RNA sequence: GGGAACGACUCGAGUAGAGUCGAAAACAUCUCUUCCUCUAGUGAGCGAUACGGGCUCCGUUGUGCUCAUUAUUAUUCGCGUUACGGACGAUCGUGUAACAUCACGGCACGAGGGGAAUCAGGUGGCUCUCGCUGGUGGUUUCGACCAUCAGUGGGGAAAAGAAACAACAACAACAAC
Reactivity to 2A3 in 0.01 (KOAc 150mM, MgCl2 10mM, bicine 150mM(pH8.5), 24C), signal-to-noise 9, nucleotides 027 to 126: c010a020u010c000u000c000u020u010c000c000u010c010u010a020g010u000g030a030g050c050g030a030u060a120c030g020g080g040c070u010c020c020g010u010u050g050u050g010c010u010c110a050u030u150a090u130u090a090u070u140c060g000c020g040u030u070a030c030g020g020a020c040g040a070u050c010g010u010g020u060a070a060c030a110u130c050a020c030g050g000c020a010c030g020a020g010g010g000g000a000a010u050c010a020g010g020u010g020g020c010
Reactivity to DMS in 0.01 (KOAc 150mM, MgCl2 10mM, bicine 150mM(pH8.5), 24C), signal-to-noise 9, nucleotides 027 to 126: c040a020u000c000u000c160u000u000c000c000u000c000u000a060g010u000g000a050g010c050g010a080u010a020c030g000g010g010c140u020c010c010g000u000u010g010u030g000c000u000c100a060u010u030a080u030u020a110u020u020c110g000c090g010u010u010a060c040g010g010a050c120g000a050u010c010g010u000g000u020a080a100c150a100u020c140a210c070g000g010c030a020c030g000a020g000g000g000g000a020a020u010c200a020g000g010u000g000g000c070
Overview: The record gives the reactivity of an RNA of 177 nucleotides to 2A3 and DMS. For DMS, 94,029 sequencing reads were counted. Source: RMDB library OK1LIB, as collected in RNAgym. For 2A3, 145,485 sequencing reads were counted.